[RMDB]
Conditions: 150 mM KOAc, 10 mM MgCl2 and 150 mM bicine (pH 8.5), 24 C. Structure probing data (DMS and 2A3) for a 177-nucleotide construct.

RNA sequence: GGGAACGACUCGAGUAGAGUCGAAAAUUAAUCCGGCUUUAAGUUGACGAGGGCAGGGUUUAUCGAGACAUCGGCGGGUGGCCUGCGGUCUUCCUGCGACCGUUAGAGGACUGGUAAACCAAUUUAAAGCAUAAUAAAUCUUCGGAUUUAUUAUGCUAAAAGAAACAACAACAACAAC
Reactivity to DMS in 0.01 (KOAc 150mM, MgCl2 10mM, bicine 150mM(pH8.5), 24C), signal-to-noise 4, nucleotides 027 to 126: u000u000a080a090u010c020c010g030g010c030u000u000u000a040a080g010u000u010g010a070c100g010a100g020g000g000c040a050g000g010g010u010u000u000a030u000c050g010a100g010a080c080a040u010c050g010g040c070g010g010g020u010g010g010c030c030u000g010c030g000g010u000c030u000u010c050c040u000g010c130g000a050c040c040g000u000u000a060g010a080g010g010a090c050u000g000g010u000a040a070a100c040c030a090a100u000u000u010a060a090
Reactivity to 2A3 in 0.01 (KOAc 150mM, MgCl2 10mM, bicine 150mM(pH8.5), 24C), signal-to-noise 2, nucleotides 027 to 126: u070u020a040a040u070c020c000g040g030c050u110u120u110a100a060g010u130u090g120a050c040g020a040g000g030g000c010a020g050g030g000u060u060u020a120u080c080g050a030g030a050c040a070u020c010g040g030c020g000g060g050u060g000g030c000c030u060g020c000g000g030u030c000u100u050c010c020u000g000c000g020a060c030c000g000u010u010a030g030a030g090g000a030c040u040g000g030u030a070a000a010c010c010a010a010u140u090u120a300a240

Reactivities are given for positions 27 through 126. 2A3 adducts were read by reverse transcription with SuperScript II with manganese. The 2A3 profile rests on 1,350 reads.